[RMDB]
RNA sequence: GGGAACGACUCGAGUAGAGUCGAAAAGGUUCGCGCUUCCGUGAAACGCGAAAAUCGGACGGUGGCUGCAAGUCGCAUCGCAAAACCGCGGCAAGUGGAGUUAGCGAGAGGAGGCUGGGUUUUGGCUAGAACACACGGUACUUCGGUACCGUGUGAACAAAAACUAACGGUUCGCCGUUAGUUUUUGAAAAGAAACAACAACAACAAC
Reactivity to 2A3 in 0.01 (KOAc 150mM, MgCl2 10mM, bicine 150mM(pH8.5), 24C), signal-to-noise 2, nucleotides 027 to 156: g020g010u060u000c020g010c000g020c030u080u030c040c080g130u100g090a100a080a020c040g000c030g040a080a010a000a050u120c040g040g010a050c020g030g020u030g020g030c030u070g020c060a090a010g030u030c040g000c060a060u030c040g010c090a020a000a080a010c020c020g000c010g070g060c090a120a060g010u040g020g050a060g030u120u160a010g030c000g020a020g010a010g090g000a030g030g000c060u020g030g000g030u000u030u090u040g020g000c020u040a070g050a150a010c000a000c000a010c010g000g000u010a010c040u040u050c200g050g000u000a010c000c000g010u010g000u000g000a000a000
Reactivity to DMS in 0.01 (KOAc 150mM, MgCl2 10mM, bicine 150mM(pH8.5), 24C), signal-to-noise 2, nucleotides 027 to 156: g020g010u000u010c020g030c000g010c000u000u000c010c220g010u010g000a050a010a010c010g000c000g010a040a020a060a090u000c030g030g010a100c030g020g020u000g010g050c020u020g010c070a060a080g030u020c020g000c050a170u000c030g040c000a090a100a140a130c090c050g010c000g020g000c060a080a090g030u000g030g020a150g020u000u010a100g000c030g000a090g010a120g020g080a070g010g000c020u010g000g020g000u000u000u000u010g010g000c060u010a130g000a120a170c010a010c000a010c000g000g020u000a000c000u000u000c280g070g020u000a010c000c010g020u020g010u010g030a050a080
This 207-nucleotide RNA was probed chemically with 2A3 and DMS. DMS adducts were read by reverse transcription with MarathonRT. Reactivities are given for positions 27 through 156. It was measured as part of the RMDB library M2RFPK. The reactions ran in a buffer of 150 mM KOAc, 10 mM MgCl2 and 150 mM bicine (pH 8.5), at 24 C.